[RMDB]
RNA sequence: GGGAACGACUCGAGUAGAGUCGAAAAGCGGCGCGUGGGCGAUGCCGUCGUACUGGGCCGUGUAAAUGUGUGUCGGGUAGGGACUAUUCGCCGGGGUUGCGCCAUUGAACGGCACGUCCAGGAACGGGCAUGUGCAAGCGUUCGCGCUUGCACAUGCAAAAGAAACAACAACAACAAC
Reactivity to 2A3 in 0.01 (KOAc 150mM, MgCl2 10mM, bicine 150mM(pH8.5), 24C), signal-to-noise 2, nucleotides 027 to 126: g040c020g020g010c010g000c020g080u080g000g060g030c000g000a010u000g010c000c010g110u040c020g000u000a030c120u080g030g000g070c050c000g000u000g080u260a020a100a080u230g030u000g010u000g080u050c000g080g000g030u050a020g040g030g010a040c040u070a250u120u070c010g000c040c030g020g000g000g000u130u180g000c050g070c010c000a010u020u040g010a090a000c010g000g000c000a000c000g020u000c000c000a010g020g030a060a020c080g100g010
Reactivity to DMS in 0.01 (KOAc 150mM, MgCl2 10mM, bicine 150mM(pH8.5), 24C), signal-to-noise 1, nucleotides 027 to 126: g080c060g000g010c000g000c080g030u030g000g030g010c020g010a060u010g000c020c000g010u000c110g000u010a210c080u080g020g000g000c040c080g000u000g010u020a060a070a090u000g000u040g070u030g000u020c080g000g000g000u000a150g020g000g020a180c120u000a080u030u060c100g000c050c050g000g000g020g000u000u000g020c040g000c040c040a050u040u000g000a100a000c000g040g030c040a110c200g000u010c050c010a100g000g000a180a210c050g000g020